An RNA of 177 nucleotides, treated with 2A3 and DMS and read out base by base. For 2A3, 2,659 sequencing reads were counted. The RNA was probed in 150 mM KOAc, 10 mM MgCl2 and 150 mM bicine (pH 8.5) at 24 C. Values cover nucleotides 27 to 126.
[RMDB]
RNA sequence: GGGAACGACUCGAGUAGAGUCGAAAAGAUGGUGCGGAUGCGUUCGGUUUCGUCGGCGAGGGAAUCGAGCACGGCGAGGAAGCUCUCGCCGGGCACGCAGAACACGCGCUCGACGUGAUUCGCGAGAUGAUUAUGGAGUCUUCGGACUCCAUAAUCAAAAAGAAACAACAACAACAAC
Reactivity to 2A3 in 0.01 (KOAc 150mM, MgCl2 10mM, bicine 150mM(pH8.5), 24C), signal-to-noise 2, nucleotides 027 to 126: g110a100u210g010g100u110g020c040g010g020a030u040g010c020g030u070u070c020g010g000u050u050u140c080g040u040c040g010g060c030g010a050g000g030g030a050a030u080c020g000a020g000c020a010c010g010g000c030g000a020g010g050a150a160g050c050u040c000u010c110g020c010c010g010g000g010c000a010c010g010c030a000g020a110a010c060a000c040g000c000g030c030u080c050g040a030c000g000u070g060a090u050u080c020g000c040g050a050g010a120
Reactivity to DMS in 0.01 (KOAc 150mM, MgCl2 10mM, bicine 150mM(pH8.5), 24C), signal-to-noise 4, nucleotides 027 to 126: g020a070u000g020g020u000g010c070g000g020a060u000g010c040g000u000u000c060g010g010u000u000u000c040g010u000c040g020g020c030g010a070g020g010g000a130a090u000c020g010a080g000c010a050c040g000g010c000g020a030g000g010a160a140g010c130u020c010u010c000g010c010c010g000g000g020c010a070c010g020c090a060g010a150a130c070a070c020g010c050g000c070u010c040g000a070c010g010u000g010a130u000u010c020g000c060g000a120g010a130